[RMDB]
RNA sequence: GGGAACGACUCGAGUAGAGUCGAAAAUGAAUAUGAACCAUUGCCAGAAGAUGUUAAGAAAACUUCAAAAGCCGAUCUAAUCUUUUACAAUGGGAUUAACCUUGAAACAGGAGGCAAUGCUUGGUUAGUGAUUUACCUAUUUCGAUAGGUAAAUCACAAAAGAAACAACAACAACAAC
Reactivity to 2A3 in 0.01 (KOAc 150mM, MgCl2 10mM, bicine 150mM(pH8.5), 24C), signal-to-noise 2, nucleotides 027 to 126: u090g040a040a050u200a060u250g050a030a000c000c000a020u010u040g030c040c050a050g000a020a010g030a030u080g020u130u080a110a070g070a120a140a050a080c020u060u070c040a120a190a040a070g090c170c040g030a030u000c040u020a050a000u020c000u010u110u030u030a100c100a090a100u090g030g010g030a000u090u030a070a100c020c000u010u040g090a080a070a020c040a030g010g020a030g060g000c000a020a020u070g020c040u060u010g050g020u050u020a030
Reactivity to DMS in 0.01 (KOAc 150mM, MgCl2 10mM, bicine 150mM(pH8.5), 24C), signal-to-noise 3, nucleotides 027 to 126: u000g000a130a110u030a100u000g010a090a180c020c010a030u000u000g020c050c090a100g000a050a010g000a030u000g010u020u020a070a080g020a040a110a120a090c030u000u010c140a110a090a150a120g040c050c080g010a140u000c020u000a090a020u000c000u000u000u010u000a090c090a050a050u010g000g000g000a140u000u000a040a100c030c040u000u000g000a020a080a110c160a070g000g020a070g000g010c070a020a030u010g000c040u000u000g010g010u000u010a100
This 177-nucleotide RNA was probed chemically with 2A3 and DMS. For 2A3 the reverse transcriptase was SuperScript II with manganese. The reactions ran in a buffer of 150 mM KOAc, 10 mM MgCl2 and 150 mM bicine (pH 8.5), at 24 C. For DMS, 2,011 sequencing reads were counted.